An RNA of 177 nucleotides, treated with DMS and 2A3 and read out base by base. The 2A3 profile rests on 1,526 reads. DMS adducts were read by reverse transcription with MarathonRT. It was measured as part of the RMDB library OK1LIB.
RNA sequence: GGGAACGACUCGAGUAGAGUCGAAAAUUGAUCCAACAAGUCGGAAACAUCCUGUCUGGUUUCGAUCAAUUGCACAGAGCCCACAGGAACACCAGUCUCACUUUGGAAUUGUGCAAUGGUGUCGUUACGGCUGAGUAUCAUUCGUGAUACUCAGCCGAAAAGAAACAACAACAACAAC
Reactivity to DMS in 0.01 (KOAc 150mM, MgCl2 10mM, bicine 150mM(pH8.5), 24C), signal-to-noise 2, nucleotides 027 to 126: u000u010g010a040u000c020c140a040a070c190a080a050g030u000c080g000g000a010a290a150c190a060u010c000c000u070g000u000c000u000g100g000u000u000u020c270g000a060u000c020a040a000u000u030g010c130a070c020a050g000a050g030c190c000c060a040c130a040g000g000a100a040c000a030c050c070a100g050u000c180u000c020a030c030u000u010u000g000g020a130a110u000u000g000u000g000c090a050a100u000g000g030u000g030u000c060g020u010u000a180
Reactivity to 2A3 in 0.01 (KOAc 150mM, MgCl2 10mM, bicine 150mM(pH8.5), 24C), signal-to-noise 3, nucleotides 027 to 126: u000u040g010a010u010c030c000a000a000c030a030a040g040u020c010g000g060a120a220a080c130a180u070c010c040u090g050u050c060u110g040g040u050u040u100c040g010a000u000c000a070a040u000u040g030c060a090c030a060g060a090g040c000c020c000a020c000a050g000g110a080a000c000a020c050c040a050g180u100c060u040c060a190c010u110u190u160g070g080a100a040u150u050g040u000g010c010a020a050u070g010g020u030g040u050c020g070u040u070a060